[RMDB]
The record gives the reactivity of an RNA of 177 nucleotides to 2A3 and DMS. Values are in units of 0.01, from 0 to 300, in steps of 10. The RNA was probed in 150 mM KOAc, 10 mM MgCl2 and 150 mM bicine (pH 8.5) at 24 C. 2A3 adducts were read by reverse transcription with SuperScript II with manganese.
RNA sequence: GGGAACGACUCGAGUAGAGUCGAAAAGCGCGUCUGGCCUAGUCAGUACGAUCGUACACGUAGGCCGCGCUAGUACAGUACGAUCAUGCUGGCCAUGACUGGCCGUACGGCCUGCGAUGGUACAGCGCGUCUGAGUUUUCUUCGGAAAACUCAGACGAAAAGAAACAACAACAACAAC
Reactivity to 2A3 in 0.01 (KOAc 150mM, MgCl2 10mM, bicine 150mM(pH8.5), 24C), signal-to-noise 2, nucleotides 027 to 126: g070c010g000c000g050u020c120u140g010g050c000c000u020a030g090u110c130a040g020u010a030c000g030a110u090c060g010u000a000c070a010c070g070u010a000g000g020c000c000g010c000g000c000u010a000g010u050a000c070a040g000u010a020c000g010a030u030c020a030u170g030c000u030g010g000c010c000a060u080g090a250c030u020g000g000c040c000g100u180a040c210g000g000c020c010u030g000c030g090a040u030g030g020u170a300c000a020g000c000g000
Reactivity to DMS in 0.01 (KOAc 150mM, MgCl2 10mM, bicine 150mM(pH8.5), 24C), signal-to-noise 3, nucleotides 027 to 126: g030c040g010c050g000u010c100u020g010g000c000c010u000a090g010u000c120a120g020u000a070c110g000a040u000c040g030u010a010c000a100c080g000u000a020g000g020c020c040g000c020g000c020u010a140g020u020a080c210a130g020u000a020c020g010a020u000c000a130u020g020c000u000g000g010c000c040a020u010g010a080c040u010g000g000c000c000g000u010a040c210g020g030c000c000u000g000c120g010a040u010g000g010u010a050c020a030g000c010g000